[RMDB]
RNA sequence: GGGAACGACUCGAGUAGAGUCGAAAAGAGAGGCUGAGAUGGGAAAGUUGCUUGAGCUCGGGCAGCAGGAGUUCCAGGCUGCAGUGAGCUAAGAAUGCGCCACUGGACUCCAGUAUGGGCGACAGCGUGCCAUAGAGCUGUUCGCAGCUCUAUGGCAAAAAGAAACAACAACAACAAC
Reactivity to DMS in 0.01 (KOAc 150mM, MgCl2 10mM, bicine 150mM(pH8.5), 24C), signal-to-noise 2, nucleotides 027 to 126: g010a150g000a050g010g000c030u000g000a080g020a040u000g010g000g010a040a050a060g020u010u000g010c010u010u000g010a140g020c030u010c000g040g020g000c040a030g000c050a100g000g010a110g000u000u000c020c020a110g020g010c020u000g030c010a020g000u010g010a130g000c140u000a050a050g000a080a070u000g000c010g000c020c030a120c080u010g000g000a070c050u000c010c020a090g000u000a080u020g000g000g020c020g010a120c140a100g010c110g000

Notes
Structure probing data (DMS) for a 177-nucleotide construct. It was measured as part of the RMDB library OK2TST. The reactions ran in a buffer of 150 mM KOAc, 10 mM MgCl2 and 150 mM bicine (pH 8.5), at 24 C. DMS adducts were read by reverse transcription with MarathonRT.